[RMDB]
RNA sequence: GGGAACGACUCGAGUAGAGUCGAAAAGUAUUGGUGCAGAUGUGACUACUGAGUUGAACUAUGUACCUGAGAAGGUUUCACAUUUAGCAACUUCUAUGAUGUCUAUGGGUGCUACUGUCAUUGAUGACAAUGGUAUCUAUGAAGUCUUAGAUAACAAGCACUCUCCAGACUUCGGUCUGGAGAGUGCAAAAGAAACAACAACAACAAC
Reactivity to 2A3 in 0.01 (KOAc 150mM, MgCl2 10mM, bicine 150mM(pH8.5), 24C), signal-to-noise 1, nucleotides 027 to 156: g080u090a100u150u020g000g000u010g010c010a010g010a070u090g110u050g080a120c080u180a070c090u180g040a010g150u070u040g100a050a000c050u040a150u230g060u100a020c000c020u080g000a120g040a050a060g040g000u060u180u150c120a100c030a040u060u100u180a020g040c030a060a060c000u000u060c000u010a000u070g050a010u070g030u090c060u060a020u070g060g000g000u000g020c010u010a020c000u060g000u010c000a090u130u260g160a160u150g000a170c000a000a080u000g020g000u030a000u080c000u000a020u040g000a110a010g040u000c040u060u000a030g020a000u050a040a050c100a130a000